Background
Chemical mapping of a 177-nucleotide RNA with 2A3 and DMS. It was measured as part of the RMDB library M2PK50.
RNA sequence: GGGAACGACUCGAGUAGAGUCGAAAACGAUAGCUGUUCGCAGCUAUCGAAAGGACUACCCGUCAGGGUUAAGGCCAUACGGACAGGCGGGUCCAAUGCCGAAAAGAGGGUUGUUCGCAACCCUCAAGGUAAACCUACGGUUCGCCGUAGGUUUACCAAAAGAAACAACAACAACAAC
Reactivity to 2A3 in 0.01 (KOAc 150mM, MgCl2 10mM, bicine 150mM(pH8.5), 24C), signal-to-noise 2, nucleotides 027 to 126: c010g000a010u000a010g010c020u000g030u070u030c300g000c140a010g000c000u020a000u000c010g000a030a000a000g000g000a010c010u030a040c040c010c000g060u150c100a100g040g040g020u090u120a110a060g300g000c010c010a050u080a120c030g040g040a030c010a020g000g040c010g000g000g030u070c000c000a010a010u070g050c000c000g050a140a030a000a030g000a010g000g020g010u030u040g010u050u040c120g010c090a000a000c000c020c010u020c010a000a000
Reactivity to DMS in 0.01 (KOAc 150mM, MgCl2 10mM, bicine 150mM(pH8.5), 24C), signal-to-noise 2, nucleotides 027 to 126: c010g000a000u000a020g000c000u000g010u010u010c230g050c000a000g000c000u020a000u000c000g010a020a050a090g030g010a020c020u000a080c010c000c000g010u020c220a140g020g000g000u000u020a070a080g020g020c020c050a050u000a150c070g000g000a050c030a150g010g000c000g000g020g000u000c020c000a120a080u000g000c000c000g000a050a050a130a110g000a030g000g000g000u000u010g000u000u010c150g000c000a000a020c000c000c000u000c000a010a000